[RMDB]
RNA sequence: GGGAACGACUCGAGUAGAGUCGAAAAAGACGGAAACCCAUCGACUGUCACCAGAUGCUGCAUCACCUGAUCACUGAUGGUUCAACGGUAUCCGGCGGUACAACUGAAUACUUGUAGCUGCCUUUUGAAAAGGAGUUCAUCUUCGGAUGAACUCCAACCAAUCUCUGGAGUUCGCUCCAGAGAUUGGAAAAGAAACAACAACAACAAC
Reactivity to 2A3 in 0.01 (KOAc 150mM, MgCl2 10mM, bicine 150mM(pH8.5), 24C), signal-to-noise 3, nucleotides 027 to 156: a000g020a010c050g070g040a100a040a030c000c000c010a060u080c040g110a090c030u040g040u040c030a020c040c000a070g020a090u100g060c070u050g030c060a040u080c020a050c000c010u050g040a030u030c040a010c070u080g000a020u030g050g000u050u030c020a050a090c020g050g000u050a040u060c060c030g010g000c000g000g000u000a000c000a020a010c020u160g090a170a090u130a190c040u060u020g000u010a050g120c010u020g000c010c000u110u200u110u150g070a090a080a020a020g000g000a000g000u000u000c000a000u000c000u050u080c290g070g000a000u000g000a000a000c000u000c000c000a000a000